[RMDB]
An RNA of 177 nucleotides, treated with 2A3 and DMS and read out base by base.
RNA sequence: GGGAACGACUCGAGUAGAGUCGAAAAAGCAGCUUACGAGCUGCAGCUGGUAAAAUCCUUUCCCAACCUCCACGCGGUACCGGCUGGAAUAUGCUCAUAGUUGAUGCAUAUACUGACAGGGAAGGAAGUCCUAUGCAGUUUUCGAACUGCAUAGGACAAAAGAAACAACAACAACAAC
Reactivity to 2A3 in 0.01 (KOAc 150mM, MgCl2 10mM, bicine 150mM(pH8.5), 24C), signal-to-noise 7, nucleotides 027 to 126: a000g010c010a010g010c000u070u100a050c280g080a020g000c000u010g000c000a010g020c030u060g000g040u100a030a060a080a170u120c000c000u040u080u060c000c000c000a030a050c010c010u050c010c010a150c160g050c080g050g010u020a040c000c000g030g000c000u020g020g000a030a000u020a000u000g000c000u010c030a110u160a220g190u170u170g070a050u160g010c000a000u020a000u020a060c020u060g080a050c050a100g000g010g010a000a020g020g010a060a030
Reactivity to DMS in 0.01 (KOAc 150mM, MgCl2 10mM, bicine 150mM(pH8.5), 24C), signal-to-noise 2, nucleotides 027 to 126: a070g000c020a000g010c010u000u040a100c110g010a040g000c000u000g000c010a020g020c080u000g000g030u000a020a040a070a090u000c010c000u000u000u010c000c000c000a190a140c070c040u010c010c020a060c160g020c080g020g000u000a030c040c010g010g000c020u000g000g010a080a020u000a000u000g020c010u000c020a070u020a140g020u010u040g010a040u020g090c000a000u000a030u000a060c100u000g000a140c200a140g010g000g000a050a010g000g000a120a100
Source information: It was measured as part of the RMDB libraries RFM100 and RFMREP. High DMS reactivity at an A or C suggests that its Watson-Crick edge is free.